[RMDB]
RNA sequence: GGGAACGACUCGAGUAGAGUCGAAAAGAUAUGGACCUUAUUGAGCGACCCGUGCACGAAUUGUAGCACAAUCGGAAACGAUUGUGCUACAACUAUGCAUGGUCGCAAUGAUGUAAGGUCCUAAGUCGACUUAAUCUUGGUUCGCCAAGAUUAAGUCAAAAGAAACAACAACAACAAC
Reactivity to DMS in 0.01 (KOAc 150mM, MgCl2 10mM, bicine 150mM(pH8.5), 24C), signal-to-noise 3, nucleotides 027 to 126: g020a090u000a300u010g010g000a010c010c010u010u000a000u000u000g010a140g000c000g000a020c100c020c200g100u000g000c000a000c110g020a030a110u000u000g030u000a000g020c000a020c000a000a000u000c000g020g020a110a120a210c010g040a020u000u000g030u000g020c000u000a000c000a000a010c080u010a150u000g000c000a000u000g020g010u000c000g020c000a040a030u000g010a100u000g000u000a000a010g000g000u000c000c000u000a020a090g000u000c120
Reactivity to 2A3 in 0.01 (KOAc 150mM, MgCl2 10mM, bicine 150mM(pH8.5), 24C), signal-to-noise 2, nucleotides 027 to 126: g100a060u120a140u200g010g000a000c000c000u020u020a000u010u090g060a040g010c000g020a040c120c090c180g030u030g000c030a050c060g130a300a300u010u020g010u000a000g020c000a000c000a020a020u000c000g060g060a090a120a070c010g000a000u000u030g000u000g000c000u030a000c000a020a020c010u020a000u010g020c000a010u040g000g020u020c010g000c000a000a140u120g000a040u110g010u040a000a030g000g010u020c010c000u000a040a000g020u030c070
The data come from the RNA Mapping Database (RMDB), library TTRINS.
This 177-nucleotide RNA was probed chemically with DMS and 2A3.
For DMS, 3,230 sequencing reads were counted.
For 2A3 the reverse transcriptase was SuperScript II with manganese.
The 2A3 profile rests on 2,823 reads.
The RNA was probed in 150 mM KOAc, 10 mM MgCl2 and 150 mM bicine (pH 8.5) at 24 C.